[RMDB]
This 177-nucleotide RNA was probed chemically with DMS and 2A3. Source: RMDB library OK2TRN, as collected in RNAgym. High DMS reactivity at an A or C suggests that its Watson-Crick edge is free. Values cover nucleotides 27 to 126.
RNA sequence: GGGAACGACUCGAGUAGAGUCGAAAAUGGCAGGGAGCUGGCAUCUUGUCCUUUGGGCCAUCGGUGUGGUCGAUACAUAGUAGGUCCUCACAGAAGGUCUGUUAAAUGACUGGGGACGAGGGCCUGCCCAAUGUGUGGAGUUCGCUCCACACAUUGGAAAAGAAACAACAACAACAAC
Reactivity to DMS in 0.01 (KOAc 150mM, MgCl2 10mM, bicine 150mM(pH8.5), 24C), signal-to-noise 4, nucleotides 027 to 126: u010g010g010c030a060g000g010g030a110g020c050u000g010g010c020a070u000c050u000u020g000u000c030c020u000u010u000g010g010g000c010c030a040u010c100g020g020u010g020u010g000g000u010c040g010a130u000a080c150a100u010a150g020u000a050g020g010u000c000c000u010c020a100c110a100g010a170a170g000g000u000c010u010g010u000u010a070a140a150u010g010a040c030u000g000g020g020g000a150c110g000a020g000g010g000c010c000u000g000c020
Reactivity to 2A3 in 0.01 (KOAc 150mM, MgCl2 10mM, bicine 150mM(pH8.5), 24C), signal-to-noise 3, nucleotides 027 to 126: u070g030g020c010a010g000g050g030a060g060c050u030g050g000c010a040u040c070u030u080g010u010c000c000u060u090u130g020g010g000c020c010a050u050c080g060g040u110g020u030g080g010u030c020g010a030u010a180c060a030u100a050g060u000a010g000g010u020c010c000u000c010a070c010a040g110a080a010g020g010u000c010u010g100u120u160a190a150a070u170g010a030c010u010g000g000g050g050a020c050g000a010g000g010g000c020c010u000g000c000